An RNA of 177 nucleotides, treated with DMS and 2A3 and read out base by base. The data come from the RNA Mapping Database (RMDB), library OK2TST. Values are in units of 0.01, from 0 to 300, in steps of 10. For 2A3 the reverse transcriptase was SuperScript II with manganese. The RNA was probed in 150 mM KOAc, 10 mM MgCl2 and 150 mM bicine (pH 8.5) at 24 C.
RNA sequence: GGGAACGACUCGAGUAGAGUCGAAAAGCCAAUUGGACACCCCGUGAGAGCAUGCUGCUAGCCCUGGCUUCGUGUCUUCUGCAAACUGCGAUCUCUGCUCUUGAAGGUGACUUGAUGGUCCUCAUUAGCAUCACCAUCCAUUCGUGGAUGGUGAUGCAAAAGAAACAACAACAACAAC
Reactivity to DMS in 0.01 (KOAc 150mM, MgCl2 10mM, bicine 150mM(pH8.5), 24C), signal-to-noise 2, nucleotides 027 to 126: g010c030c040a130a080u010u000g010g010a190c090a110c010c000c050c030g000u000g000a090g010a070g020c000a120u000g030c060u010g020c060u010a160g010c030c080c180u000g010g040c020u000u010c060g080u020g000u000c030u000u000c030u000g000c100a040a060a070c090u000g000c060g020a030u010c060u000c060u000g010c000u000c010u000u010g000a150a160g000g020u010g010a040c070u000u000g000a060u010g010g020u000c020c020u010c100a150u020u010a090
Reactivity to 2A3 in 0.01 (KOAc 150mM, MgCl2 10mM, bicine 150mM(pH8.5), 24C), signal-to-noise 1, nucleotides 027 to 126: g010c000c030a010a140u070u100g030g020a020c000a060c000c010c010c020g060u130g040a060g010a000g030c020a060u070g020c000u020g020c010u040a080g000c000c000c020u060g000g000c000u040u080c070g040u030g030u000c000u060u000c040u040g030c010a050a030a050c060u070g050c020g030a110u050c000u020c010u040g000c010u030c000u030u060g020a090a010g020g010u040g020a030c000u010u070g050a060u150g030g000u040c000c020u020c010a120u100u110a030